[RMDB]
RNA sequence: GGGAACGACUCGAGUAGAGUCGAAAAGACCGUCAGUUAGACGGAAGAAGUGCAUAAAUCCACACCGGAAGACGAGAUAAUGCACAAAUGUGGAUAAGCGUACGGAUCUACGUGCGCUAAACGUGAGAAAUCGCCAUGAGUUCGCUCAUGGCGAUUUAAAAGAAACAACAACAACAAC
Reactivity to 2A3 in 0.01 (KOAc 150mM, MgCl2 10mM, bicine 150mM(pH8.5), 24C), signal-to-noise 1, nucleotides 027 to 126: g000a000c000c000g000u000c000a000g100u220u300a000g000a120c080g000g080a000a000g080a100a130g000u000g000c000a080u000a120a110a000u000c000c000a090c010a070c300c000g050g170a100a080g000a020c020g000a000g100a180u020a030a010u150g060c200a000c000a000a000a130u200g000u080g080g050a200u180a130a020g030c000g000u040a000c030g000g000a030u110c000u120a180c080g000u000g040c000g000c000u000a000a000a000c000g000u080g090a080g000
Reactivity to DMS in 0.01 (KOAc 150mM, MgCl2 10mM, bicine 150mM(pH8.5), 24C), signal-to-noise 1, nucleotides 027 to 126: g000a010c000c000g050u000c000a190g050u070u040a110g000a030c040g050g000a080a090g000a120a090g130u000g030c000a070u040a130a020a080u000c090c110a000c110a150c090c020g000g040a010a050g010a130c070g000a180g030a100u000a170a050u000g020c070a000c020a000a090a050u000g000u000g030g000a150u000a010a020g020c000g000u110a000c070g000g010a150u010c200u050a070c000g090u000g000c050g020c000u000a090a080a060c110g000u040g010a090g000

Annotation: Structure probing data (2A3 and DMS) for a 177-nucleotide construct. The RNA was probed in 150 mM KOAc, 10 mM MgCl2 and 150 mM bicine (pH 8.5) at 24 C. It was measured as part of the RMDB library OK1LIB.